RNA sequence: GGGAACGACUCGAGUAGAGUCGAAAAAGUUUGGUGCCAGCAGCCGCGGUAAUACCGACUCCAAGAGUGUGUAUGAGAGAUGCUGCAGUUAAAAAGUCCGUAGUCAUAGAAGGGCAAAGAGAGAUGCUCAUCUGGCAGUUUUCGAACUGCCAGAUGAAAAAGAAACAACAACAACAAC
Reactivity to DMS in 0.01 (KOAc 150mM, MgCl2 10mM, bicine 150mM(pH8.5), 24C), signal-to-noise 3, nucleotides 027 to 126: a080g000u020u000u000g010g000u000g020c050c090a150g040c010a060g020c040c060g000c050g000g000u010a130a030u020a120c040c030g000a090c020u000c040c160a070a080g000a090g040u020g020u030g000u010a040u000g030a130g020a050g000a160u020g000c030u000g000c040a060g010u020u010a040a060a070a130a080g020u000c010c010g000u000a100g000u040c110a060u010a080g030a150a090g000g020g010c060a070a060a110g000a050g000a080g020a060u040g000c100
Reactivity to 2A3 in 0.01 (KOAc 150mM, MgCl2 10mM, bicine 150mM(pH8.5), 24C), signal-to-noise 1, nucleotides 027 to 126: a000g050u050u050u080g060g010u030g090c010c000a000g000c010a000g000c000c090g000c000g050g000u050a070a070u000a110c010c020g080a040c010u000c000c000a170a000g040a020g070u100g010u020g000u190a100u010g070a080g030a000g000a020u060g000c000u040g030c030a030g030u060u080a000a110a110a080a000g040u060c050c050g160u020a060g020u110c060a030u050a010g110a040a120g150g060g010c010a000a100a000g110a000g000a000g000a020u100g000c080